[RMDB]
RNA sequence: GGGAACGACUCGAGUAGAGUCGAAAAGUUAACAUGUCUAUCAUCUUGCAUGGCUACCCAUUUUUUUGUAUGUGUGGCAAGAGCAGCUAAAAUCUAUUCAUUUAGCAGAAAUAUGGAAUACAAUACUAUUAACUAUAGUCCUCAUGUACAUCAGAUCCGUCUACAGUUUGUUCGCAAACUGUAGACGAAAAGAAACAACAACAACAAC
Reactivity to 2A3 in 0.01 (KOAc 150mM, MgCl2 10mM, bicine 150mM(pH8.5), 24C), signal-to-noise 4, nucleotides 027 to 156: g050u090u110a050a040c030a060u040g070u010c050u140a170u130c060a080u030c130u110u120g000c000a020u020g030g000c020u070a100c010c030c030a060u120u060u040u040u010u050u070g020u000a010u000g020u000g020u040g000g020c030a070a070g020a030g110c070a030g020c010u040a010a030a030a030u140c090u150a200u170u120c070a040u110u030u020a020g000c020a000g140a050a080a020u170a070u080g040g070a050a060u150a100c040a040a090u060a170c050u050a080u210u090a120a040c010u020a020u040a110g070u140c000c010u020c000a020u030g020u050a000c000a030u060c030a030g040a080u080c050
Reactivity to DMS in 0.01 (KOAc 150mM, MgCl2 10mM, bicine 150mM(pH8.5), 24C), signal-to-noise 1, nucleotides 027 to 156: g030u000u000a050a080c020a030u000g020u000c070u000a090u000c180a110u020c050u020u000g030c040a160u010g000g050c090u020a100c010c040c000a040u000u000u000u000u000u000u000g040u000a030u010g000u020g000u000g020g060c060a070a110g010a110g020c000a090g020c010u000a000a030a060a110u000c080u000a080u010u000c070a300u000u000u020a020g070c010a070g000a040a100a060u000a120u010g020g000a180a100u000a090c040a030a080u000a070c060u020a080u010u000a050a060c030u000a070u010a090g000u000c010c010u000c030a010u000g050u000a030c070a060u020c130a110g020a150u000c030
Structure probing data (2A3 and DMS) for a 207-nucleotide construct. DMS adducts were read by reverse transcription with MarathonRT. The reactions ran in a buffer of 150 mM KOAc, 10 mM MgCl2 and 150 mM bicine (pH 8.5), at 24 C.